Record summary: The data come from the RNA Mapping Database (RMDB), libraries RFM100 and RFMREP. The record gives the reactivity of an RNA of 177 nucleotides to DMS and 2A3. DMS adducts were read by reverse transcription with MarathonRT. The reactions ran in a buffer of 150 mM KOAc, 10 mM MgCl2 and 150 mM bicine (pH 8.5), at 24 C.

[RMDB]
RNA sequence: GGGAACGACUCGAGUAGAGUCGAAAACCCUUAAUUCAAAUUUACCAGAUAGCUGAUAAUGUAAGUGAAAAUGCUGGCAUACACAGAUAUUGAAAAAUCUUGGAAUUUGAACUUUAUCACUGACCAUCUAGUACAUAGAGUUCGCUCUAUGUACUAGAAAAGAAACAACAACAACAAC
Reactivity to DMS in 0.01 (KOAc 150mM, MgCl2 10mM, bicine 150mM(pH8.5), 24C), signal-to-noise 2, nucleotides 027 to 126: c010c000c010u000u000a090a090u010u000c030a030a030a020u000u020u010a140c010c010a070g010a020u000a090g020c010u000g010a070u020a050a030u010g000u010a100a040g000u000g000a140a080a200a110u010g010c020u000g000g020c040a020u010a060c160a100c040a020g010a060u020a220u020u020g030a050a030a080a100a020u010c040u000u020g030g000a030a010u000u010u000g000a040a070c200u010u000u010a040u010c120a080c120u010g000a130c140c110a140u000
Reactivity to 2A3 in 0.01 (KOAc 150mM, MgCl2 10mM, bicine 150mM(pH8.5), 24C), signal-to-noise 9, nucleotides 027 to 126: c010c000c000u030u150a130a080u020u010c010a000a000a010u030u040u060a170c010c000a010g010a040u040a030g040c010u020g010a070u070a300a020u070g030u040a050a060g020u050g210a260a090a060a050u250g000c010u020g080g000c010a040u070a040c060a010c010a060g040a060u080a090u190u180g090a180a100a040a040a020u010c020u050u050g020g020a020a020u030u020u010g010a010a020c010u120u200u090a150u230c090a090c200u120g080a070c020c010a020u000